[RMDB]
This 177-nucleotide RNA was probed chemically with 2A3 and DMS. Conditions: 150 mM KOAc, 10 mM MgCl2 and 150 mM bicine (pH 8.5), 24 C. Values are in units of 0.01, from 0 to 300, in steps of 10. The DMS profile rests on 17,186 reads.
RNA sequence: GGGAACGACUCGAGUAGAGUCGAAAAGAGCACGAAAAAGACCGUGAGAAAAGAGAAACCGGAAAAUGGUGAAAAGGGGUAUUAGACACGUACGUCUUUUCUUUUCUUUUCAGUGCGUGUCGAGAAAGGGUAAACAUAAGUUCGCUUAUGUUUACCCAAAAGAAACAACAACAACAAC
Reactivity to 2A3 in 0.01 (KOAc 150mM, MgCl2 10mM, bicine 150mM(pH8.5), 24C), signal-to-noise 6, nucleotides 027 to 126: g070a020g040c050a010c090g120a110a040a030a030a010g050a060c020c010g010u050g010a100g030a030a070a010a000g050a010g010a090a070a000c020c030g070g010a090a090a050a060u220g050g020u060g030a030a010a020a030g000g000g010g030u050a110u070u110a080g050a030c030a000c070g000u010a020c040g160u020c020u040u050u080u020c010u050u150u030u020c010u030u080u020u020c020a000g000u010g050c010g010u100g000u000c010g000a010g060a070a050a020
Reactivity to DMS in 0.01 (KOAc 150mM, MgCl2 10mM, bicine 150mM(pH8.5), 24C), signal-to-noise 6, nucleotides 027 to 126: g010a080g010c040a040c030g000a090a070a120a100a120g000a040c070c010g020u000g010a250g000a010a030a030a030g020a060g000a050a290a050c020c000g010g010a030a070a100a050u030g000g000u000g010a010a020a040a030g010g000g010g000u010a030u010u030a080g010a060c110a030c090g010u000a000c000g000u010c020u000u000u000u000c030u020u000u010u000c010u000u000u000u000c040a130g000u010g010c000g010u020g000u000c000g010a090g000a060a090a130